[RMDB]
RNA sequence: GGGAACGACUCGAGUAGAGUCGAAAAAUAAUGGUCGUCCGACUGGUACAUUCACUGUUGUAAUGCGCCCUAACUACACAAUUAAGGGUUCCUUUCUGUGUGGUUCUUGUGGUAGUGUUGGUUACACCACUUUAGUUAAGUUCGCUUAACUAAAGUGAAAAGAAACAACAACAACAAC
Reactivity to 2A3 in 0.01 (KOAc 150mM, MgCl2 10mM, bicine 150mM(pH8.5), 24C), signal-to-noise 3, nucleotides 027 to 126: a020u110a010a070u110g040g010u020c020g040u000c080c030g020a050c060u040g060g020u050a040c030a070u000u150c040a050c090u050g050u100u030g030u060a050a060u120g040c030g030c030c000c000u000a010a020c010u030a010c010a000c000a050a200u100u040a030a050g070g120g000u160u220c010c000u030u040u030c020u000g030u010g000u000g020g000u010u020c040u070u130g050u150g040g040u030a080g030u040g030u080u010g030g040u060u070a010c010a010c020
Reactivity to DMS in 0.01 (KOAc 150mM, MgCl2 10mM, bicine 150mM(pH8.5), 24C), signal-to-noise 7, nucleotides 027 to 126: a080u010a070a070u010g000g010u000c050g000u000c090c060g010a070c060u000g020g010u000a070c090a090u000u000c070a090c120u000g010u000u000g010u010a050a060u000g020c090g010c010c010c040u000a030a030c020u000a020c030a020c030a030a080u000u000a030a020g010g000g020u010u010c030c010u000u000u000c080u000g010u000g000u010g010g000u000u000c210u000u000g020u010g020g020u000a070g040u010g000u000u000g000g010u000u000a080c090a100c110